[RMDB]
Structure probing data (DMS) for a 177-nucleotide construct. The RNA was probed in 150 mM KOAc, 10 mM MgCl2 and 150 mM bicine (pH 8.5) at 24 C. The DMS profile rests on 1,909 reads.

RNA sequence: GGGAACGACUCGAGUAGAGUCGAAAAGAGUUCACACAGGUCACACGACAUCACCUCCGGUCCCAACUGCCCUGGUCACUGUCCCCAGAUGCGCUUAGUCCACAGAGUCCCCUGCUGAAGCCAAGCCCCAGACAUAGGAGUUCGCUCCUAUGUCUGGAAAAGAAACAACAACAACAAC
Reactivity to DMS in 0.01 (KOAc 150mM, MgCl2 10mM, bicine 150mM(pH8.5), 24C), signal-to-noise 2, nucleotides 027 to 126: g000a140g010u000u000c040a080c100a100c050a070g040g020u000c060a100c090a100c080g000a050c050a120u000c070a080c080c010u000c000c020g030g020u030c030c010c020a090a110c080u000g010c020c030c010u000g000g000u000c040a030c040u010g010u000c000c000c010c050a090g020a060u000g000c100g020c040u010u010a120g000u000c040c030a060c050a080g000a140g030u000c020c010c010c040u000g030c070u010g020a090a090g010c030c060a040a100g030c090c070